[RMDB]
RNA sequence: GGGAACGACUCGAGUAGAGUCGAAAAGUCAGAUCUCCUUUUGUCGUUUCGGACAGGUGCACCCUGAUCAUCGUAUAUUUCAGGAAGAACCGUUGCAAGCUGGCGAAGCCUUUACUUUGGAUAUCUGCAUACGUAUGGGCUUCGGCCCAUACGUAUGAAAAGAAACAACAACAACAAC
Reactivity to 2A3 in 0.01 (KOAc 150mM, MgCl2 10mM, bicine 150mM(pH8.5), 24C), signal-to-noise 2, nucleotides 027 to 126: g050u010c010a000g000a050u010c020u030c020c000u000u080u050u100g080u040c000g070u020u030u040c050g020g050a090c010a030g060g000u020g010c040a040c020c000c000u010g010a010u040c050a070u060c080g200u270a110u020a060u210u040u010c010a010g040g030a030a120g090a160a050c100c020g010u000u030g010c000a040a050g070c020u040g020g010c010g000a030a010g030c030c000u120u160u070a100c060u100u090u130g000g000a000u030a000u070c030u020g000
Reactivity to DMS in 0.01 (KOAc 150mM, MgCl2 10mM, bicine 150mM(pH8.5), 24C), signal-to-noise 3, nucleotides 027 to 126: g010u000c020a030g010a020u000c040u010c000c010u000u000u000u000g000u010c220g020u000u000u000c040g000g000a070c060a030g040g020u000g030c040a090c100c000c020u010g000a040u010c200a040u000c280g020u000a120u000a070u000u010u000c020a050g000g010a130a090g000a100a080c140c160g000u000u010g010c050a040a100g010c030u000g010g020c040g000a030a050g010c030c120u000u000u000a080c120u000u000u000g000g000a060u000a030u000c020u000g000